[RMDB]
Structure probing data (DMS) for a 177-nucleotide construct.
RNA sequence: GGGAACGACUCGAGUAGAGUCGAAAAGCUUACUACUCCAGAAAAGUGGGAUGGAAAUGACUUCAGUUUUAGAAUACUCAACUCCUAAUCCUGCUGAAGUUCAAAACAUAUGUAAUGACCAUGCAAAUGCAAAAUCAUCAUUCGUGAUGAUUUUGCAAAAAGAAACAACAACAACAAC
Reactivity to DMS in 0.01 (KOAc 150mM, MgCl2 10mM, bicine 150mM(pH8.5), 24C), signal-to-noise 1, nucleotides 027 to 126: g000c090u000u000a100c000u000a020c050u000c000c070a190g000a080a170a090a010g020u000g010g000g010a050u000g000g020a000a120a300u000g000a000c110u000u000c000a070g000u000u000u000u010a120g000a020a000u000a100c300u000c070a020a090c220u000c020c000u000a090a100u000c040c080u000g030c050u000g000a050a020g000u020u000c060a080a070a020a080c170a130u000a080u020g000u000a070a040u010g020a110c080c100a060u000g010c150a000a110a180
It was measured as part of the RMDB library OK2TST.